[RMDB]
RNA sequence: GGGAACGACUCGAGUAGAGUCGAAAAUGCGAAUGGAGAUGUCUUAGUGGCCUCGUGUGGCCAGCUAUUGUGCGCAAAUUCGGCCAUUGGGAGGAAAUGCGCCCAGUUAUCUUGCCGCUCGUUCGUCGUAAUAUUAUGCGUUCGCGCAUAAUAUUACAAAAGAAACAACAACAACAAC
Reactivity to 2A3 in 0.01 (KOAc 150mM, MgCl2 10mM, bicine 150mM(pH8.5), 24C), signal-to-noise 9, nucleotides 027 to 126: u190g010c010g030a010a020u080g100g040a080g030a080u090g050u020c030u100u190a160g050u130g160g000c010c010u040c050g060u080g020u040g060g000c000c010a000g010c000u010a020u050u060g010u020g000c000g000c000a010a010a060u050u030c030g250g060c070c030a220u240u270g220g010g010a030g010g020a010a020a020u030g010c000g000c010c010c000a020g010u050u040a040u040c020u000u020g020c000c010g000c010u010c010g010u040u000c010g040u020c020
Reactivity to DMS in 0.01 (KOAc 150mM, MgCl2 10mM, bicine 150mM(pH8.5), 24C), signal-to-noise 9, nucleotides 027 to 126: u010g010c010g010a030a040u010g020g010a250g010a060u000g010u000c040u000u010a130g030u010g010g000c010c020u000c270g010u010g030u000g010g020c000c030a020g010c160u000a030u000u000g010u000g000c010g010c010a010a010a300u000u000c020g010g010c000c020a210u000u010g020g020g020a300g000g000a020a030a230u000g000c020g010c000c020c010a030g000u000u000a040u000c030u000u000g000c030c010g010c030u010c030g000u000u000c030g000u000c220
Annotation:
Chemical mapping of a 177-nucleotide RNA with 2A3 and DMS. The data come from the RNA Mapping Database (RMDB), library OK2TST. The RNA was probed in 150 mM KOAc, 10 mM MgCl2 and 150 mM bicine (pH 8.5) at 24 C.